[RMDB]
Conditions: 150 mM KOAc, 10 mM MgCl2 and 150 mM bicine (pH 8.5), 24 C. An RNA of 207 nucleotides, treated with DMS and 2A3 and read out base by base. DMS adducts were read by reverse transcription with MarathonRT. For 2A3 the reverse transcriptase was SuperScript II with manganese. Reactivities are given for positions 27 through 156. Source: RMDB library RNAMAK, as collected in RNAgym.
RNA sequence: GGGAACGACUCGAGUAGAGUCGAAAAGGAACUUCGGUUCCAGUACGGCGUACUACGACCUGCUAGUCCUACGACUACCCACCGUGAUCCCAAAUAGGAUCACGAGGUCGUCAGGACUUGGACCAGGUCGUAUCGCGAUCUUGGAGUUCGCUCCAAAACACAGAUGGUAAUUCGUUACCAUCUGUGUAAAAGAAACAACAACAACAAC
Reactivity to DMS in 0.01 (KOAc 150mM, MgCl2 10mM, bicine 150mM(pH8.5), 24C), signal-to-noise 2, nucleotides 027 to 156: g010g010a000a010c010u000u010c290g070g030u000u000c000c020a110g020u000a080c130g010g040c030g010u000a120c110u000a010c020g030a030c010c030u030g020c040u000a020g030u000c010c010u010a050c030g030a030c010u000a030c030c010c040a300c180c000g000u000g000a020u000c010c000c010a080a220a290u010a100g020g000a030u000c010a000c010g000a030g000g030u000c010g010u000c090a040g030g010a010c000u000u010g050g010a100c220c020a010g020g000u010c010g030u000a000u000c040g000c000g000a050u000c070u000u000g030g010a150g010u000u000c020g050c140u010c000c020a030a050a170
Reactivity to 2A3 in 0.01 (KOAc 150mM, MgCl2 10mM, bicine 150mM(pH8.5), 24C), signal-to-noise 4, nucleotides 027 to 156: g000g010a010a000c020u050u090c300g140g000u020u000c000c010a000g040u070a040c120g050g000c020g030u120a130c060u000a010c030g000a010c010c000u010g020c010u020a000g000u000c000c010u030a100c070g000a000c000u060a020c010c100c000a070c060c000g000u000g000a000u030c040c050c040a210a300a110u300a100g000g000a000u000c000a000c000g000a020g010g000u010c000g000u020c070a000g000g010a000c010u040u090g030g050a030c100c040a000g010g000u000c000g000u000a000u020c000g000c020g050a060u040c030u040u040g030g010a010g020u140u120c150g070c090u000c000c010a030a000a050